[RMDB]
Chemical mapping of a 177-nucleotide RNA with DMS and 2A3. For DMS the reverse transcriptase was MarathonRT.
RNA sequence: GGGAACGACUCGAGUAGAGUCGAAAACGACCACAUGAAGCAGCACGACUUCUUCAAGUCCGCCAUGCCCGAAGGCUACGUCCAGGAGCGCACCAUCUUCUUCAAGGACGACGGCAACUACAAGACCGAGGCUUCUAAGUUUCGACUUAGAAGCCUCAAAAGAAACAACAACAACAAC
Reactivity to DMS in 0.01 (KOAc 150mM, MgCl2 10mM, bicine 150mM(pH8.5), 24C), signal-to-noise 1, nucleotides 027 to 126: c110g010a210c000c070a080c110a040u000g000a030a020g000c080a030g000c070a050c120g010a130c050u000u030c090u000u000c050a030a180g000u010c030c010g000c000c050a130u010g000c020c000c080g000a080a050g040g030c000u000a070c050g020u020c060c010a060g000g000a230g000c110g000c000a020c120c080a090u030c050u010u030c030u000u030c100a000a050g000g000a060c030g000a100c020g010g000c010a050a010c130u010a070c040a000a000g000a100c180c140
Reactivity to 2A3 in 0.01 (KOAc 150mM, MgCl2 10mM, bicine 150mM(pH8.5), 24C), signal-to-noise 3, nucleotides 027 to 126: c030g020a010c020c030a080c020a120u060g030a040a010g020c070a000g020c010a010c220g060a160c100u010u010c000u040u090c090a030a040g020u030c060c030g020c040c040a080u090g020c000c000c020g080a110a040g060g000c030u020a010c040g060u050c000c010a040g030g070a070g000c040g010c020a040c040c000a080u060c020u120u010c000u080u100c040a030a020g030g010a030c020g010a050c000g020g000c010a060a010c040u090a080c040a050a060g000a020c000c070